[RMDB]
The record gives the reactivity of an RNA of 177 nucleotides to DMS. The reactions ran in a buffer of 150 mM KOAc, 10 mM MgCl2 and 150 mM bicine (pH 8.5), at 24 C. Source: RMDB library OK2TRN, as collected in RNAgym.

RNA sequence: GGGAACGACUCGAGUAGAGUCGAAAACCCAGAGCACAGCAGUCCUUGUGCCUGGGCUCUCCAUGGGGCCCAUGGAGGCUCCCCCACAACUGUUGGGAAGGGCAGGGCUUUGCUGCUUUCUGCCUGCCUUUUGGGGAUUGUUCGCAAUCCCCAAAAGAAAAGAAACAACAACAACAAC
Reactivity to DMS in 0.01 (KOAc 150mM, MgCl2 10mM, bicine 150mM(pH8.5), 24C), signal-to-noise 1, nucleotides 027 to 126: c010c000c000a070g010a130g020c040a050c000a040g000c180a100g020u000c100c040u000u010g060u000g000c020c020u010g000g000g000c030u010c020u010c040c090a070u010g010g000g000g020c100c030c020a040u020g000g010a040g010g000c040u010c010c050c010c040c010a050c100a100a150c120u000g000u010u020g010g010g030a140a120g000g000g000c010a040g000g000g000c080u000u000u020g010c130u000g000c000u000u000u020c030u010g020c020c010u010g030c130